[RMDB]
RNA sequence: GGGAACGACUCGAGUAGAGUCGAAAAGGUGUUAGAAGGAAUCUCCAGCUUAGGCAGUUCUGGUCUCUCUUAACAUCAAUAUUGCUUGACACGUCAGUAGCUCUCAGGGAUACUGGAGGUUCUCAAAGGUAAUUACGAGUUUCGACUCGUAAUUACCAAAAGAAACAACAACAACAAC
Reactivity to DMS in 0.01 (KOAc 150mM, MgCl2 10mM, bicine 150mM(pH8.5), 24C), signal-to-noise 4, nucleotides 027 to 126: g020g010u000g010u000u000a070g000a130a110g010g000a050a020u000c010u010c020c010a030g010c130u000u000a080g020g010c080a060g000u010u010c040u000g000g010u000c030u000c030u000c030u010u000a050a040c060a010u000c050a050a090u000a100u010u000g000c050u000u010g010a090c130a070c130g000u000c040a040g000u000a070g000c030u000c030u010c100a110g000g000g000a080u000a120c020u000g000g000a030g010g000u000u000c000u000c090a090a080a080
Reactivity to 2A3 in 0.01 (KOAc 150mM, MgCl2 10mM, bicine 150mM(pH8.5), 24C), signal-to-noise 3, nucleotides 027 to 126: g050g000u070g050u100u060a050g060a200a060g110g000a020a050u050c020u000c030c010a000g000c050u090u080a060g030g030c020a030g000u130u050c040u070g050g000u000c030u000c000u000c010u070u040a030a010c010a040u080c030a070a060u150a120u150u110g040c070u060u090g030a010c020a000c160g070u070c020a060g030u050a020g010c020u000c010u030c070a030g100g020g020a090u060a240c010u020g020g010a020g000g000u000u000c030u000c000a040a050a030
The record gives the reactivity of an RNA of 177 nucleotides to DMS and 2A3. Reactivities are rounded to 0.1 and cut off at 0 and 3. Source: RMDB library OK2TST, as collected in RNAgym. The RNA was probed in 150 mM KOAc, 10 mM MgCl2 and 150 mM bicine (pH 8.5) at 24 C.